The data come from the RNA Mapping Database (RMDB), library TTRDEL. Chemical mapping of a 177-nucleotide RNA with 2A3 and DMS. DMS adducts were read by reverse transcription with MarathonRT. High 2A3 reactivity points to a flexible backbone, as in loops and unpaired stretches. For 2A3 the reverse transcriptase was SuperScript II with manganese. For 2A3, 9,386 sequencing reads were counted. The RNA was probed in 150 mM KOAc, 10 mM MgCl2 and 150 mM bicine (pH 8.5) at 24 C.
RNA sequence: GGGAACGACUCGAGUAGAGUCGAAAAGAUAUGGAUGUAGGAGCUAUCCAGGCGUUGAAAUCGGAAACGAUGGAGCCUGGUAGCUCCCUACAUCCUAAGUCAAAAGCGAUGUCUUCGGACAUCGCAACCUGGUACUAUUGUUCGCAAUAGUACCAGGAAAAGAAACAACAACAACAAC
Reactivity to 2A3 in 0.01 (KOAc 150mM, MgCl2 10mM, bicine 150mM(pH8.5), 24C), signal-to-noise 3, nucleotides 027 to 126: g020a010u100a030u190g000g000a000u000g000u010a010g000g010a000g000c000u000a030u250c040c010a020g010g020c030g250u300u100g030a060a040a000u010c020g010g040a000a110a070c000g000a010u020g010g020a010g020c000c020u010g000g000u020a000g010c000u010c000c010c000u000a010c000a010u000c000c000u000a000a000g000u000c030a000a010a080a090g000c000g000a000u000g010u000c000u040u110c300g080g000a000c000a000u000c010g000c000a010a010
Reactivity to DMS in 0.01 (KOAc 150mM, MgCl2 10mM, bicine 150mM(pH8.5), 24C), signal-to-noise 4, nucleotides 027 to 126: g000a060u010a300u000g000g000a000u000g010u000a000g010g010a050g010c000u000a010u020c000c000a010g000g000c010g010u000u020g000a070a100a020u000c010g000g000a100a110a210c000g010a010u000g000g010a150g010c000c010u010g000g010u000a000g010c010u000c100c030c000u000a000c000a000u000c000c000u000a010a060g010u000c050a080a070a080a140g000c000g010a020u000g000u000c000u010u020c170g020g000a030c000a000u000c010g030c000a000a030